An RNA of 207 nucleotides, treated with DMS and 2A3 and read out base by base.
For DMS, 12,143 sequencing reads were counted.
Source: RMDB library OK3TST, as collected in RNAgym.
The 2A3 profile rests on 2,583 reads.
RNA sequence: GGGAACGACUCGAGUAGAGUCGAAAAUUUUAGGGUGGAGUGCGUAUGUUGGUUUAGCGUUAACUGUUUUAACUUGUUCCGUCCCUAUUGUUUUAGGACCUUUGGUCGCAAAGCUUACAUUGCGAGCUAAUCGUGCAACUGAUUCGCGUAUCGAGCACAUACUAGGGGAGUUCGCUCCCCUAGUAUGAAAAGAAACAACAACAACAAC
Reactivity to DMS in 0.01 (KOAc 150mM, MgCl2 10mM, bicine 150mM(pH8.5), 24C), signal-to-noise 3, nucleotides 027 to 156: u000u000u010u000a070g000g010g040u010g040g010a100g020u000g020c020g030u000a080u000g010u000u000g010g000u000u000u010a100g030c100g020u000u000a070a080c060u010g010u010u010u000u010a040a090c070u000u000g010u000u000c010c010g030u000c020c000c020u000a070u000u000g010u000u000u000u000a120g010g000a100c040c020u000u000u010g030g020u010c020g010c010a040a060a120g010c090u010u000a090c110a210u000u000g020c020g010a060g000c030u000a030a060u000c060g020u010g020c040a070a100c050u010g010a140u000u010c030g000c060g020u000a090u000c030g000a120g020c040a240
Reactivity to 2A3 in 0.01 (KOAc 150mM, MgCl2 10mM, bicine 150mM(pH8.5), 24C), signal-to-noise 4, nucleotides 027 to 156: u070u040u020u040a020g000g000g010u040g000g010a020g030u070g030c040g020u110a080u140g150u110u130g050g020u060u080u090a050g030c050g030u040u070a060a050c060u070g110u060u100u060u100a030a060c050u070u080g050u110u030c010c030g050u050c010c010c010u010a050u030u070g060u010u020u040u100a060g010g030a050c000c000u060u080u120g030g020u050c010g000c060a060a010a010g020c020u050u040a020c020a120u080u080g000c010g020a020g040c020u060a050a060u040c040g060u040g050c050a100a060c070u090g010a110u110u060c010g000c000g050u030a050u120c040g020a010g030c020a010
Annotation: For DMS the reverse transcriptase was MarathonRT. Values cover nucleotides 27 to 156.